[RMDB]
Structure probing data (DMS and 2A3) for a 177-nucleotide construct. Conditions: 150 mM KOAc, 10 mM MgCl2 and 150 mM bicine (pH 8.5), 24 C. It was measured as part of the RMDB library OK2TST. 2A3 adducts were read by reverse transcription with SuperScript II with manganese.
RNA sequence: GGGAACGACUCGAGUAGAGUCGAAAAGUGCUUUUCCAUUGCCGCGCCUGUGUCCCAGAUGAAGUGGCGCACGCCGCCGGCCAGAUGGUGCAGCAGCGCCCAGGUGUAACCGAACAGGAUGAGGCGACAUAAAUCGGACUUUCGAGUCCGAUUUAUGAAAAGAAACAACAACAACAAC
Reactivity to DMS in 0.01 (KOAc 150mM, MgCl2 10mM, bicine 150mM(pH8.5), 24C), signal-to-noise 4, nucleotides 027 to 126: g020u000g020c030u000u000u010u010c030c090a130u010u000g020c040c020g030c020g020c010c030u020g010u000g010u000c030c000c010a190g010a160u010g000a070a120g000u010g000g020c010g030c040a050c090g000c060c050g010c030c060g010g000c110c210a150g000a060u010g000g020u000g000c040a080g020c030a170g000c020g000c010c000c020a090g030g020u000g010u010a070a110c030c040g000a070a130c050a050g000g020a070u000g020a120g010g010c020g020a110
Reactivity to 2A3 in 0.01 (KOAc 150mM, MgCl2 10mM, bicine 150mM(pH8.5), 24C), signal-to-noise 3, nucleotides 027 to 126: g070u080g050c040u060u060u080u030c080c060a160u020u110g010c030c010g020c000g010c020c010u050g020u030g040u070c000c010c040a030g040a100u200g060a100a050g040u130g120g000c030g010c020a020c090g050c010c020g060c030c010g010g000c020c010a100g040a300u170g030g040u060g010c050a030g000c000a020g010c020g000c000c010c000a000g000g000u140g030u050a040a040c030c010g010a070a020c000a030g000g030a020u050g030a030g040g000c030g000a010